[RMDB]
An RNA of 177 nucleotides, treated with DMS and 2A3 and read out base by base. For 2A3, 759 sequencing reads were counted. The data come from the RNA Mapping Database (RMDB), library OK2TRN. Values are in units of 0.01, from 0 to 300, in steps of 10.

RNA sequence: GGGAACGACUCGAGUAGAGUCGAAAAAGGAUAAUAAUUCAGAAUUGACAUUUUAUGGGAAAUAAAAGCUUUGCAUAUUGAAGUGAGGGAAAAGGUGUUUCCCUUGCCUGGGAAUUUCUCUUUUCCAUCCCAUUUUCAAAUUCGUUUGAAAAUGGGAAAAAGAAACAACAACAACAAC
Reactivity to DMS in 0.01 (KOAc 150mM, MgCl2 10mM, bicine 150mM(pH8.5), 24C), signal-to-noise 3, nucleotides 027 to 126: a060g000g020a070u000a100a090u010a080a070u000u000c070a120g010a150a110u030u010g000a200c040a080u000u010u000u010a050u000g010g000g000a060a060a050u000a030a080a120a200g000c090u000u000u010g000c100a100u010a140u000u020g010a080a080g010u010g030a100g000g010g000a000a000a020a040g010g010u000g000u000u000u000c010c000c000u000u000g010c140c150u000g010g010g010a050a040u000u000u000c020u000c010u000u000u000u000c000c010a210
Reactivity to 2A3 in 0.01 (KOAc 150mM, MgCl2 10mM, bicine 150mM(pH8.5), 24C), signal-to-noise 2, nucleotides 027 to 126: a000g200g020a070u140a130a020u080a050a090u240u090c050a010g100a170a300u170u110g040a130c000a070u070u080u030u050a010u050g050g020g060a050a050a050u070a040a170a040a160g090c060u180u140u140g050c040a120u090a200u300u130g000a070a060g070u040g080a050g010g050g000a000a000a000a000g080g070u040g030u010u010u020c010c000c060u000u100g060c020c070u000g020g040g040a030a030u020u080u000c090u000c000u020u010u010u010c000c010a010